[RMDB]
Notes
Structure probing data (2A3) for a 207-nucleotide construct. 2A3 adducts were read by reverse transcription with SuperScript II with manganese. Source: RMDB library M2RFPK, as collected in RNAgym. Conditions: 150 mM KOAc, 10 mM MgCl2 and 150 mM bicine (pH 8.5), 24 C. For 2A3, 512 sequencing reads were counted.
RNA sequence: GGGAACGACUCGAGUAGAGUCGAAAAGACCCUUUAUGGAACUGUCAUUCAACCCCAAAAAUCUAGUGCAAAUAUUGUCUUAAUUACUUAGGCUAAAAGAAAGAAGUAUUAAAGCGGGACAAGGCAUAACAGCAGCUACGCUUCGGCGUAGCUGCAACAUUCUUGUGCGUUUCGACGCACAAGAAUGAAAAGAAACAACAACAACAAC
Reactivity to 2A3 in 0.01 (KOAc 150mM, MgCl2 10mM, bicine 150mM(pH8.5), 24C), signal-to-noise 1, nucleotides 027 to 156: g050a000c010c020c000u020u100u070a110u090g010g010a060a120c080u080g030u040c010a120u050u070c050a190a150c010c000c000c050a140a000a000a000a030u120c090u140a010g030u060g140c030a000a140a130u120a140u150u110g020u000c000u070u100a070a130u090u010a160c040u060u090a030g120g000c020u040a010a140a000a000g040a010a180a000g090a030a080g000u000a010u170u070a090a070a000g090c070g000g000g020a000c010a030a020g030g060c000a000u060a120a050c050a040g030c000a000g000c000u000a000c010g000c020u030u030c080g000g030c020g000u000a000g010c000u000g000c000a000a000